[RMDB]
RNA sequence: GGGAACGACUCGAGUAGAGUCGAAAAGGUUGGUUCCGAGGGGGGUGUGAUCCAGGUACCGCCGUAGAAACUGGAUUACGACGCCUACCCGGGAUUCAAACCCGGUCCCCCUCAGAGGUGACUCUGAGUGAAAGGUCUGUGCUUAGCACACUGAUGACAGUUAUAUUAUGUUCGCAUAAUAUAACUGAAAAGAAACAACAACAACAAC
Reactivity to 2A3 in 0.01 (KOAc 150mM, MgCl2 10mM, bicine 150mM(pH8.5), 24C), signal-to-noise 5, nucleotides 027 to 156: g000g000u000u010g010g000u030u000c020c020g010a300g010g010g000g000g000g000u030g000u000g020a000u000c000c000a010g040g000u070a080c030c110g130c070c090g060u090a050g100a070a300a010c000u000g000g010a010u000u010a010c160g060a030c020g300c060c000u210a300c080c000c010g020g000g010a090u300u300c080a120a020a090c010c000c000g020g090u000c000c000c000c000c000u000c000a000g000a000g000g040u100g030a060c000u000c000u000g010a000g000u010g000a110a020a000g050g020u060c080u060g010u010g040c040u150u200a050g000c020a020c010a020c080u140g030a090u150g050a050
Reactivity to DMS in 0.01 (KOAc 150mM, MgCl2 10mM, bicine 150mM(pH8.5), 24C), signal-to-noise 3, nucleotides 027 to 156: g010g010u010u010g020g020u000u000c010c010g000a090g020g000g000g030g050g030u000g010u000g020a040u000c000c030a010g000g020u000a140c090c060g030c080c280g000u010a120g000a090a110a210c020u000g000g000a120u000u000a060c030g010a080c050g010c030c020u000a070c010c010c020g000g000g020a020u000u000c050a100a020a060c020c040c010g000g010u000c020c000c010c010c000u000c010a010g000a020g020g010u000g010a300c010u010c000u030g010a030g020u020g010a140a140a160g010g020u010c060u010g020u000g000c010u000u010a220g010c070a050c020a050c050u010g000a140u010g020a300